[RMDB]
RNA sequence: GGGAACGACUCGAGUAGAGUCGAAAAGAAUAUAAGAGCGCAGUAAAUGUGAGAGCAAACUGCGCCCGGACUGUAGGAUCCGGUGGCACAGCAACGCUCACUCACAAAACGCUGUGCCACGUGAAGACGAUUAGCACUACUUCGGUAGUGCUAAUCGAAAAGAAACAACAACAACAAC
Reactivity to DMS in 0.01 (KOAc 150mM, MgCl2 10mM, bicine 150mM(pH8.5), 24C), signal-to-noise 3, nucleotides 027 to 126: g000a090a080u070a050u010a060a050g010a090g000c000g010c010a010g000u010a030a040a170u000g040u010g000a030g010a140g000c090a050a120a070c010u000g000c010g020c000c010c050g020g000a030c040u010g010u020a070g000g000a240u000c040c020g000g010u000g010g010c000a030c000a020g030c010a110a140c210g000c070u020c000a030c080u040c240a150c250a040a080a080a070c280g000c000u000g000u030g000c000c000a010c010g020u040g000a150a120g030a150
Reactivity to 2A3 in 0.01 (KOAc 150mM, MgCl2 10mM, bicine 150mM(pH8.5), 24C), signal-to-noise 6, nucleotides 027 to 126: g030a060a050u200a000u060a100a010g040a000g010c000g000c010a000g010u060a030a090a070u060g020u040g050a050g000a000g050c050a080a160a000c000u000g000c000g000c010c000c010g000g010a010c020u180g080u290a080g100g040a080u010c000c000g020g000u010g000g000c010a000c000a000g000c010a020a100c080g030c030u050c020a060c020u140c020a100c070a070a110a060a020c090g000c000u000g000u010g000c000c000a010c020g060u100g060a040a020g110a040
Structure probing data (DMS and 2A3) for a 177-nucleotide construct. Values cover nucleotides 27 to 126. For DMS, 3,417 sequencing reads were counted. For DMS the reverse transcriptase was MarathonRT.